[RMDB]
The record gives the reactivity of an RNA of 177 nucleotides to 2A3 and DMS. Conditions: 150 mM KOAc, 10 mM MgCl2 and 150 mM bicine (pH 8.5), 24 C. It was measured as part of the RMDB library TTRDEL.

RNA sequence: GGGAACGACUCGAGUAGAGUCGAAAAGAUAUGGAUCGAACUACAGUGUAGACAGCGAAGAACUCGGAAACGAGGGAGCUGUCCGAAGCUGCGAUCCUAAGUCAAAACCGUUUCUUCGGAAACGGAACUCCGUAUGAAUGUUCGCAUUCAUACGGAGAAAAGAAACAACAACAACAAC
Reactivity to 2A3 in 0.01 (KOAc 150mM, MgCl2 10mM, bicine 150mM(pH8.5), 24C), signal-to-noise 4, nucleotides 027 to 126: g020a040u100a040u160g020g010a020u010c020g010a060a060c060u180a090c300a000g000u030g030u300a020g010a020c000a000g000c040g230a300a070g010a120a060c000u000c010g000g000a080a050a040c030g000a000g020g020g010a010g000c000u000g010u000c050c030g060a050a000g000c010u020g010c000g000a000u000c000c000u020a170a010g050u010c040a020a030a110a200c010c010g010u020u010u000c020u020u060c300g160g010a020a000a000c000g000g020a020a030
Reactivity to DMS in 0.01 (KOAc 150mM, MgCl2 10mM, bicine 150mM(pH8.5), 24C), signal-to-noise 3, nucleotides 027 to 126: g020a040u000a300u010g000g010a010u010c000g010a070a060c050u010a300c030a020g010u000g010u010a160g000a000c010a010g030c010g000a100a160g000a080a220c000u000c010g000g000a090a070a190c010g000a000g000g020g000a080g010c000u000g000u010c010c050g000a080a260g000c010u010g000c010g000a000u000c010c010u000a020a070g010u000c010a070a050a120a200c000c000g000u000u010u000c010u020u010c250g010g000a000a000a000c000g010g010a050a040
The DMS profile rests on 2,313 reads.